[RMDB]
RNA sequence: GGGAACGACUCGAGUAGAGUCGAAAAAAAAUGUUAGAAGUAUAAUUCUCAUGUAAAUAGCUCUUGUCAGGUUAUAUUUCAGUCAUUAAUGCAGUAUACAGCAGGAUAGGAAUGUCAGUUCAAAAGAGAAUACACAAAACUAGGAUUUUCUUAGUGAAAAUACGCAAGUAUUCGUACUUGCGUAUUUAAAAGAAACAACAACAACAAC
Reactivity to DMS in 0.01 (KOAc 150mM, MgCl2 10mM, bicine 150mM(pH8.5), 24C), signal-to-noise 2, nucleotides 027 to 156: a060a020a050a050u000g000u000u000a190g000a090a100g010u000a070u010a070a060u010u000c020u000c010a140u000g000u000a040a150a100u010a050g000c030u000c080u000u000g020u000c060a060g010g020u000u000a060u010a070u000u000u000c020a090g020u010c050a080u010u010a050a090u010g050c020a170g010u010a070u010a060c040a040g040c030a040g000g030a100u000a060g010g000a040a010u000g020u000c050a070g040u000u020c040a060a070a070a160g000a130g010a080a060u000a080c070a090c050a050a080a050a050c060u000a050g010g010a190u010u000u010u000c000u010u010a120g000u010g000a110
Reactivity to 2A3 in 0.01 (KOAc 150mM, MgCl2 10mM, bicine 150mM(pH8.5), 24C), signal-to-noise 1, nucleotides 027 to 156: a000a000a000a000u080g000u060u030a050g010a190a050g080u010a180u010a190a060u290u070c000u010c000a050u010g040u080a040a160a110u050a160g020c070u050c010u080u090g020u050c000a020g010g060u100u030a050u010a020u050u010u030c000a000g030u000c040a100u050u090a060a030u100g000c000a000g020u010a000u000a080c060a040g040c000a000g030g000a010u060a070g030g050a030a020u020g050u100c060a000g020u080u020c010a020a060a050a000g050a050g020a020a090u110a040c070a000c060a010a110a060a090c030u010a010g040g020a090u180u000u240u080c000u000u000a030g040u040g090a020
Chemical mapping of a 207-nucleotide RNA with DMS and 2A3. For DMS the reverse transcriptase was MarathonRT. For 2A3, 671 sequencing reads were counted. The reactions ran in a buffer of 150 mM KOAc, 10 mM MgCl2 and 150 mM bicine (pH 8.5), at 24 C. For 2A3 the reverse transcriptase was SuperScript II with manganese. Reactivities are given for positions 27 through 156.